Overview:
This 177-nucleotide RNA was probed chemically with 2A3 and DMS. The RNA was probed in 150 mM KOAc, 10 mM MgCl2 and 150 mM bicine (pH 8.5) at 24 C. DMS adducts were read by reverse transcription with MarathonRT. Reactivities are rounded to 0.1 and cut off at 0 and 3.

[RMDB]
RNA sequence: GGGAACGACUCGAGUAGAGUCGAAAAAUCCUACUGUUUUGCCUGGGGCUUUUGCGUACAGUCAGAUGAGGCCUCAUGUUCGUUACGACUUGUAUGAUGGUAACAUGUUUAUUAAAUUUCCUGAAGUCAGAGUUAUAAAGUUCGCUUUAUAACUCUGAAAAGAAACAACAACAACAAC
Reactivity to 2A3 in 0.01 (KOAc 150mM, MgCl2 10mM, bicine 150mM(pH8.5), 24C), signal-to-noise 2, nucleotides 027 to 126: a020u020c050c010u050a090c050u100g080u070u090u100u060g040c000c000u020g030g000g010g000c000u040u000u090u160g030c030g000u060a090c030a070g050u050c050a020g050a240u070g010a030g000g030c000c010u030c020a030u060g040u010u140c060g040u040u050a040c090g050a060c070u030u070g040u050a050u090g080a030u030g040g000u010a020a000c010a030u080g010u030u110u010a110u030u060a080a160a110u060u040u000c000c010u020g070a030a000g030u020
Reactivity to DMS in 0.01 (KOAc 150mM, MgCl2 10mM, bicine 150mM(pH8.5), 24C), signal-to-noise 2, nucleotides 027 to 126: a080u010c000c000u000a080c100u000g010u000u000u020u000g030c050c030u010g000g000g000g000c030u000u000u000u000g010c120g000u000a100c140a070g010u000c050a070g010a070u000g010a090g010g000c060c030u000c030a040u000g010u010u000c070g020u010u010a070c100g020a080c060u000u000g030u000a040u000g010a070u010g000g010u010a020a050c060a030u000g000u000u000u010a120u010u000a060a090a140u000u000u000c010c020u000g000a110a160g020u000